[RMDB]
RNA sequence: GGGAACGACUCGAGUAGAGUCGAAAAGACGCUGAUGCGAUCGACUGUAAGAUAGAUAGAGUGAGCAGACAGAUACGUACGGCAAGUAUCGUCGCCAGAAUUACAGUCGCAAAUUGCCGUACGAAGAACCGUCCGGGUCAUUCGUGACCCGGACGGUAAAAGAAACAACAACAACAAC
Reactivity to 2A3 in 0.01 (KOAc 150mM, MgCl2 10mM, bicine 150mM(pH8.5), 24C), signal-to-noise 1, nucleotides 027 to 126: g010a010c050g000c090u070g180a000u170g200c190g000a100u000c000g000a000c000u000g000u000a000a000g000a090u170a140g030a050u140a010g200a020g230u100g000a060g080c010a000g020a020c030a020g040a040u010a040c000g100u050a000c000g000g070c010a000a000g000u000a020u000c000g000u000c000g000c000c000a070g050a010a010u000u000a000c000a050g000u000c050g000c070a060a060a060u000u000g000c000c000g040u040a000c110g010a070a120g010a000